[RMDB]
RNA sequence: GGGAACGACUCGAGUAGAGUCGAAAAGUACAAUGGAACAUACUACGUUCAACCAUCAUUUGAUGUUCAAGAGAGUGAAGGAUAUGGGUCUCCUACAAAAUAAGGAGUACGAAUAUGUAGGUAGCGACAUAGGAUUCCUGUUCGCAGGAAUCCUAUGAAAAGAAACAACAACAACAAC
Reactivity to 2A3 in 0.01 (KOAc 150mM, MgCl2 10mM, bicine 150mM(pH8.5), 24C), signal-to-noise 2, nucleotides 027 to 126: g060u070a050c060a090a080u140g060g030a090a020c040a060u180a110c030u030a030c040g050u040u060c030a080a040c040c020a010u060c000a030u000u020u180g100a070u040g010u190u090c100a090a010g070a010g000a010g100u040g030a060a000g050g000a030u050a080u130g130g060g000u050c030u030c010c010u040a060c070a040a210a030a040u150a110a010g060g000a020g050u120a040c000g000a050a050u100a020u180g000u000a000g020g000u070a020g040c010g050a030
Reactivity to DMS in 0.01 (KOAc 150mM, MgCl2 10mM, bicine 150mM(pH8.5), 24C), signal-to-noise 3, nucleotides 027 to 126: g020u000a040c100a070a090u000g000g030a060a030c060a080u000a130c120u000a120c110g020u000u000c070a120a160c050c030a080u000c030a080u000u010u010g000a090u000g010u020u000c190a060a040g000a180g010a040g020u010g010a090a060g000g000a100u010a040u010g000g010g000u000c010u000c010c000u020a050c110a030a040a060a110u010a050a060g010g000a090g000u000a040c060g010a090a040u000a050u010g000u000a030g000g030u010a070g010c120g010a170